[RMDB]
RNA sequence: GGGAACGACUCGAGUAGAGUCGAAAAGUAAAUACUUUCGAGUAUUUACAAAGAACGCUGCAACGCGCAGCGCGCUCGCGAGAGCUCGCCGCAGCAAAAUAAAAACUGCUGGAUUCGUCCAGCAGAACAUACUUCCCGUAUUCGUACGGGAAGUAUGAAAAGAAACAACAACAACAAC
Reactivity to 2A3 in 0.01 (KOAc 150mM, MgCl2 10mM, bicine 150mM(pH8.5), 24C), signal-to-noise 3, nucleotides 027 to 126: g000u000a010a010a000u010a000c020u060u090u130c190g040a020g000u000a000u010u000u000a000c000a000a110a010g080a080a030c080g000c040u030g020c050a100a110c160g050c010g000c190a010g010c000g000c000g000c000u000c000g010c040g030a070g000a010g110c020u020c010g020c000c040g000c010a020g000c000a060a030a110a030u140a040a100a020a020a020c010u000g010c000u000g000g020a040u030u040c140g030u010c050c000a000g020c010a000g000a000a000
Reactivity to DMS in 0.01 (KOAc 150mM, MgCl2 10mM, bicine 150mM(pH8.5), 24C), signal-to-noise 4, nucleotides 027 to 126: g000u000a000a010a000u000a000c000u000u000u020c180g010a010g020u000a000u000u000u000a000c000a050a130a150g000a140a130c140g000c020u000g030c040a130a110c170g000c120g010c160a050g010c000g010c120g010c020u000c010g000c290g000a180g010a020g010c000u000c000g010c010c050g020c020a050g020c010a110a060a100a070u000a050a060a080a090a100c020u000g010c000u010g010g010a030u000u020c160g010u000c000c000a000g020c000a000g000a020a090